An RNA of 207 nucleotides, treated with DMS and 2A3 and read out base by base.
The data come from the RNA Mapping Database (RMDB), library OK3TST.
2A3 adducts were read by reverse transcription with SuperScript II with manganese.
The reactions ran in a buffer of 150 mM KOAc, 10 mM MgCl2 and 150 mM bicine (pH 8.5), at 24 C.

RNA sequence: GGGAACGACUCGAGUAGAGUCGAAAACAUACAAAGACUGAUCAUUCUGUUGCCUCUUCACCCUCUUCAGCCAUUUCCACAGCAACACCUUCUCCUAAAUCCACUGAGCAGAGAAGCAUAAACAGUGUUACCAGCCUUAACAGUCCUCACAGUGGAAUAUUUAAUUUAGGUUCGCCUAAAUUAAAUAAAAAGAAACAACAACAACAAC
Reactivity to DMS in 0.01 (KOAc 150mM, MgCl2 10mM, bicine 150mM(pH8.5), 24C), signal-to-noise 4, nucleotides 027 to 156: c050a130u000a180c050a110a120a120g020a080c010u000g010a100u010c050a140u000u000c030u010g020u000u000g000c010c020u000c020u000u000c030a090c040c010c020u000c030u000u000c040a080g020c000c020a120u010u000u000c020c030a100c050a090g010c040a060a070c050a050c040c010u010u010c040u010c020c020u000a040a080a130u000c020c030a040c020u000g020a160g010c110a090g020a090g000a050a070g020c080a100u010a070a060a090c050a100g020u000g010u000u010a040c050c020a110g020c040c020u000u000a070a060c030a100g000u000c020c010u010c030a060c050a040g020u000g020g020a070a210
Reactivity to 2A3 in 0.01 (KOAc 150mM, MgCl2 10mM, bicine 150mM(pH8.5), 24C), signal-to-noise 5, nucleotides 027 to 156: c020a020u270a040c030a020a160a020g040a070c060u050g030a080u100c030a090u120u080c050u080g070u080u050g020c020c000u030c030u080u090c030a070c010c010c010u030c040u070u020c020a020g010c020c000a060u050u050u010c030c010a050c010a040g020c010a020a050c010a030c040c010u030u020c020u020c000c000u060a080a100a120u020c010c000a020c030u010g010a020g040c040a000g040a010g010a090a000g030c020a020u170a050a080a020c030a020g020u010g000u050u010a050c030c020a010g060c010c000u020u020a060a020c000a050g060u040c000c020u030c010a040c000a020g030u030g020g000a020a010
For 2A3, 4,035 sequencing reads were counted.